The record gives the reactivity of an RNA of 207 nucleotides to 2A3 and DMS. DMS (dimethyl sulfate) methylates the pairing face of unpaired adenines and cytosines. For 2A3 the reverse transcriptase was SuperScript II with manganese. It was measured as part of the RMDB library M2RFPK. Conditions: 150 mM KOAc, 10 mM MgCl2 and 150 mM bicine (pH 8.5), 24 C. The DMS profile rests on 2,157 reads. High 2A3 reactivity points to a flexible backbone, as in loops and unpaired stretches.
RNA sequence: GGGAACGACUCGAGUAGAGUCGAAAAUGAGAUAGCUAAAUCACCUCGGUAUGAUUAGGGUGAGACCUAGGAACCGUAGGGGUAUUCUCAAAGGAAGCUUUUGCAGUGAAGCCCAUGUAAGUGGGAUAAGAACCAACCCACUUCGGUGGGUUGGUAACUAUAACGUCCGAUUCGUCGGACGUUAUAGAAAAGAAACAACAACAACAAC
Reactivity to 2A3 in 0.01 (KOAc 150mM, MgCl2 10mM, bicine 150mM(pH8.5), 24C), signal-to-noise 2, nucleotides 027 to 156: u140g000a020g020a050u130a030g050c120u150a060a100a080u120c050a110c020c000u010c000g020g000u260a140u150g050a060u080u040a020g000g040g020u070g080a080g020a110c000c000u010a010g020g020a020a000c020c010g060u140a040g000g000g000g020u010a070u090u050c020u000c000a000a060a020g060g010a070a010g040c020u110u080u180u170g060c070a040g050u000g110a140a040g020c000c000c000a020u050g090u180a110a130g030u020g010g010g000a020u070a070a080g080a010a000c000c000a000a000c000c000c000a000c000u030u070c080g080g000u000g010g000g010u000u010g000g000u000a000a000
Reactivity to DMS in 0.01 (KOAc 150mM, MgCl2 10mM, bicine 150mM(pH8.5), 24C), signal-to-noise 1, nucleotides 027 to 156: u010g000a110g040a140u010a100g030c050u000a050a130a160u010c030a030c000c000u000c000g000g000u000a050u010g030a290u020u010a030g030g000g010u010g030a280g010a100c030c010u010a010g010g000a180a100c010c050g020u000a030g000g020g000g010u010a060u000u000c020u010c030a020a130a230g030g000a130a130g010c000u000u000u000u000g010c040a110g000u000g010a090a050g020c000c010c010a040u010g000u000a070a170g050u000g000g000g000a090u010a040a080g030a090a040c020c000a010a020c000c000c000a060c000u000u010c240g030g000u000g000g060g000u000u000g010g030u000a000a020